[RMDB]
RNA sequence: GGGAACGACUCGAGUAGAGUCGAAAAUGACAUCUUCAAUCAUAUUCUUAUUGAAUUUUCCGUCAAUACGUUUCAAUACGCCUUGUAAUACUUUGGCUGCGACAUCAUCAGGUCUUUCGUGGAAUAACCGUUACGAGAGAUUCGUCUCUCGUAACGGAAAAGAAACAACAACAACAAC
Reactivity to DMS in 0.01 (KOAc 150mM, MgCl2 10mM, bicine 150mM(pH8.5), 24C), signal-to-noise 2, nucleotides 027 to 126: u020g010a010c130a040u000c070u000u000c050a040a120u050c120a090u000a070u000u000c030u040u010a100u010u030g000a050a050u010u020u030u070c020c090g030u000c010a090a060u020a120c090g000u000u000u000c060a110a050u000a050c160g040c050c020u000u010g010u000a060a100u030a130c020u010u000u030g020g010c050u010g000c000g000a040c100a060u000c180a000u000c060a070g030g000u000c100u020u000u010c040g000u000g030g010a170a080u000a100a160
Reactivity to 2A3 in 0.01 (KOAc 150mM, MgCl2 10mM, bicine 150mM(pH8.5), 24C), signal-to-noise 5, nucleotides 027 to 126: u110g030a040c050a070u030c020u090u000c040a050a080u060c060a070u120a140u260u060c110u130u090a100u050u080g030a070a030u040u070u080u030c040c020g040u000c010a010a080u070a080c040g010u030u020u120c050a050a050u070a080c060g010c010c010u030u080g010u100a060a080u060a180c100u070u100u050g040g000c010u030g000c040g040a040c010a050u050c010a020u020c020a050g000g010u020c000u010u100u030c100g050u070g020g100a050a050u080a070a090